[RMDB]
RNA sequence: GGGAACGACUCGAGUAGAGUCGAAAAGUCUCAGAUGUUUUCGCUGCGGCUGCCGAUGCGGCUGCCGCCUUUUCCGACGCUGCCGCCGCAGUGGCUGACGCACCUGCAUCACCGGCACUGGAAGCCGAAACGUAGACGCAUUCGUGCGUCUACGUUUAAAAGAAACAACAACAACAAC
Reactivity to DMS in 0.01 (KOAc 150mM, MgCl2 10mM, bicine 150mM(pH8.5), 24C), signal-to-noise 2, nucleotides 027 to 126: g000u000c000u020c000a110g000a020u000g030u000u010u060u000c160g040c200u010g030c000g050g010c030u000g020c000c020g060a060u030g010c020g000g040c000u030g000c000c040g050c010c090u000u010u020u030c140c150g000a030c180g030c080u000g020c000c110g020c030c000g010c000a030g000u040g000g000c010u000g000a020c060g050c000a040c060c070u030g000c020a010u000c050a090c300c000g000g000c000a090c080u030g000g030a180a130g010c000c020g000
Reactivity to 2A3 in 0.01 (KOAc 150mM, MgCl2 10mM, bicine 150mM(pH8.5), 24C), signal-to-noise 2, nucleotides 027 to 126: g060u050c000u000c030a030g010a050u010g050u040u070u050u160c140g030c090u020g020c010g040g000c000u000g000c000c000g020a050u040g020c050g000g010c010u010g000c000c000g000c000c010u100u090u080u040c060c090g120a140c040g030c030u000g000c000c000g000c000c000g000c000a000g030u040g120g000c000u020g030a010c030g010c030a020c000c010u020g010c000a020u010c010a010c050c000g010g000c020a060c150u100g030g110a100a020g010c000c000g000
Structure probing data (DMS and 2A3) for a 177-nucleotide construct. It was measured as part of the RMDB library RFM100. High 2A3 reactivity points to a flexible backbone, as in loops and unpaired stretches.